[RMDB]
About this RNA:
This 177-nucleotide RNA was probed chemically with 2A3 and DMS. For DMS, 1,349 sequencing reads were counted. Conditions: 150 mM KOAc, 10 mM MgCl2 and 150 mM bicine (pH 8.5), 24 C. 2A3 adducts were read by reverse transcription with SuperScript II with manganese. High 2A3 reactivity points to a flexible backbone, as in loops and unpaired stretches.
RNA sequence: GGGAACGACUCGAGUAGAGUCGAAAAGCUCGGCCUUUCGAGGCCGAGCAGACGCCGUUUGCCUAGGCUAUAGGCAAAAUUAAAACACAAGCUGAAACACAACUGCUGAACAUUUCGAUGUUCAGAAGCCAUACAUGAGAUUCGUCUCAUGUAUGGCAAAAGAAACAACAACAACAAC
Reactivity to 2A3 in 0.01 (KOAc 150mM, MgCl2 10mM, bicine 150mM(pH8.5), 24C), signal-to-noise 2, nucleotides 027 to 126: g000c000u000c020g000g100c020c010u100u070u150c180g140a020g000g000c000c000g040a000g000c000a000g010a010c060g060c010c020g030u000u010u000g000c000c000u000a020g050g050c100u150a060u030a160g010g000c000a000a010a010a010u050u060a030a000a050a000c060a010c050a070a030g130c120u140g120a030a140a000c040a000c020a220a040c090u130g000c010u000g020a010a000c000a020u050u070u160c190g090a030u010g000u020u010c000a000g010a030a020
Reactivity to DMS in 0.01 (KOAc 150mM, MgCl2 10mM, bicine 150mM(pH8.5), 24C), signal-to-noise 2, nucleotides 027 to 126: g000c000u000c000g020g000c000c000u000u010u030c180g010a020g030g030c020c000g010a000g000c000a000g010a080c190g030c040c020g010u000u000u000g010c010c000u000a010g020g020c200u020a140u000a020g000g040c000a000a000a040a020u020u010a080a090a050a090c170a070c150a100a070g010c110u000g000a070a060a060c130a070c080a050a070c090u020g030c000u000g000a010a000c010a010u000u000u000c140g030a020u000g010u000u000c000a000g000a090a070